[RMDB]
RNA sequence: GGGAACGACUCGAGUAGAGUCGAAAAGAUAUGGACGAGUGGAGGCACCCUACCCGUUUGACGAUGCACGUUCGGAAACGAACGUGCAUCCGAGGGUAGCGGUGCCUAUGAAGCUCGUCCUAAGUCACUUAGAAAUGAGCUUCGGCUCAUUUCUAAGAAAAGAAACAACAACAACAAC
Reactivity to DMS in 0.01 (KOAc 150mM, MgCl2 10mM, bicine 150mM(pH8.5), 24C), signal-to-noise 2, nucleotides 027 to 126: g000a050u000a300u000g010g020a000c010g010a020g020u000g020g000a010g010g010c000a010c010c000c000u000a010c000c000c000g050u000u000u040g020a230c300g020a020u000g000c000a000c000g030u000u010c000g000g010a150a090a220c000g000a030a000c000g030u000g000c000a000u000c000c010g000a150g000g010g000u000a000g000c230g040g000u000g010c000c000u010a010u020g000a150a280g010c000u040c010g010u000c000c010u000a000a080g000u010c040a300
Background:
Chemical mapping of a 177-nucleotide RNA with DMS. The RNA was probed in 150 mM KOAc, 10 mM MgCl2 and 150 mM bicine (pH 8.5) at 24 C. DMS (dimethyl sulfate) methylates the pairing face of unpaired adenines and cytosines.